Structure probing data (DMS and 2A3) for a 177-nucleotide construct. For 2A3, 2,128 sequencing reads were counted. For DMS, 1,499 sequencing reads were counted. Reactivities are given for positions 27 through 126.
RNA sequence: GGGAACGACUCGAGUAGAGUCGAAAAGGCUCCCACUUCGGUGGGAGCCAAAGCUGAACCCGCAGCAAGCGUUAAACAUGGAAAAACGCACGUCCAAUGCGCAAAGCUUCCCCUUCGGGGGAAGCAAUCUAUUUCAAAGGUUCGCCUUUGAAAUAGAAAAAGAAACAACAACAACAAC
Reactivity to DMS in 0.01 (KOAc 150mM, MgCl2 10mM, bicine 150mM(pH8.5), 24C), signal-to-noise 2, nucleotides 027 to 126: g000g010c010u000c000c000c000a020c000u000u010c190g020g010u020g030g020g000a010g030c000c000a000a010a050g000c020u000g000a050a210c000c000c010g000c030a030g020c040a260a140g010c020g020u000u000a040a060a110c100a130u000g040g010a080a050a040a060a040c070g000c020a090c120g000u010c050c090a070a120u010g000c020g020c130a050a090a100g010c000u000u000c000c000c000c000u000u000c200g010g000g000g010g000a000a000g000c000a010a000
Reactivity to 2A3 in 0.01 (KOAc 150mM, MgCl2 10mM, bicine 150mM(pH8.5), 24C), signal-to-noise 2, nucleotides 027 to 126: g000g020c010u000c000c020c000a000c000u060u050c240g070g030u000g000g020g000a000g000c010c000a020a000a000g010c000u010g010a040a010c010c000c030g020c000a000g000c010a020a080g040c000g030u080u140a090a140a080c060a170u270g030g050a110a090a030a010a000c060g000c040a030c050g050u020c040c050a070a090u140g000c030g030c080a120a090a050g010c000u000u000c010c000c010c000u010u070c220g020g010g000g000g010a010a000g000c000a000a000

For 2A3 the reverse transcriptase was SuperScript II with manganese.
The data come from the RNA Mapping Database (RMDB), library M2PK50.